Chemical mapping of a 177-nucleotide RNA with 2A3. Source: RMDB library OK1LIB, as collected in RNAgym. 2A3 adducts were read by reverse transcription with SuperScript II with manganese. For 2A3, 457 sequencing reads were counted.
[RMDB]
RNA sequence: GGGAACGACUCGAGUAGAGUCGAAAACUUGCAAGAUGGCAGGGCUGUGGGGAGGCCCGUGAGAUGCCCAGGAGGCUCCACUUAAGGAGGCGCUGCACUCCCUGGACUUGGAUGAUCUUGAGUGUGACAUCGGGAGUCGGUUCGCCGACUCCCGAUGAAAAGAAACAACAACAACAAC
Reactivity to 2A3 in 0.01 (KOAc 150mM, MgCl2 10mM, bicine 150mM(pH8.5), 24C), signal-to-noise 2, nucleotides 027 to 126: c120u120u110g010c010a040a020g040a200u100g040g120c000a000g040g000g000c110u030g100u100g100g020g000g110a060g220g000c000c020c020g000u050g000a300g030a040u300g000c020c000c000a020g150g080a000g030g030c000u000c000c010a030c060u150u130a100a040g090g030a070g030g000c070g000c070u100g010c030a090c040u000c000c000c000u000g050g040a080c040u070u060g000g000a050u150g030a060u040c000u100u070g000a030g080u050g100u010g080a010